Structure probing data (2A3) for a 207-nucleotide construct. The data come from the RNA Mapping Database (RMDB), library M2RFPK. Reactivities are given for positions 27 through 156.
RNA sequence: GGGAACGACUCGAGUAGAGUCGAAAAGAACUUUGGCCGGCUCGGAAUAGAAUCAGGGGGUGCAAACCGCCCACUGGCAGAAAGGAUUAUAGCAAAUGCGUACCCUAUUGCAAUACAGCCCGGCCAACAUAGACUACUCUAUUCGUAGAGUAGUCAAGAAGUAUGAGGACUUCGGUCCUCAUACUUCAAAAGAAACAACAACAACAAC
Reactivity to 2A3 in 0.01 (KOAc 150mM, MgCl2 10mM, bicine 150mM(pH8.5), 24C), signal-to-noise 1, nucleotides 027 to 156: g020a060a020c030u070u000u000g000g000c010c000g000g050c020u040c070g010g020a040a040u110a080g010a080a070u120c000a020g020g040g000g010g000u000g000c050a120a130a030c120c000g000c000c000c000a000c010u020g020g000c010a020g100a070a060a000g080g030a120u170u120a030u170a120g010c010a160a220a220u300g000c020g090u120a070c000c000c000u080a120u090u120g130c020a000a030u110a150c010a050g060c030c070c040g000g000c000c000a000a000c000a000u080a020g000a000c000u000a000c000u000c000u000a040u110u000c080g130u110a000g000a000g000u000a000g030u030c000a000a000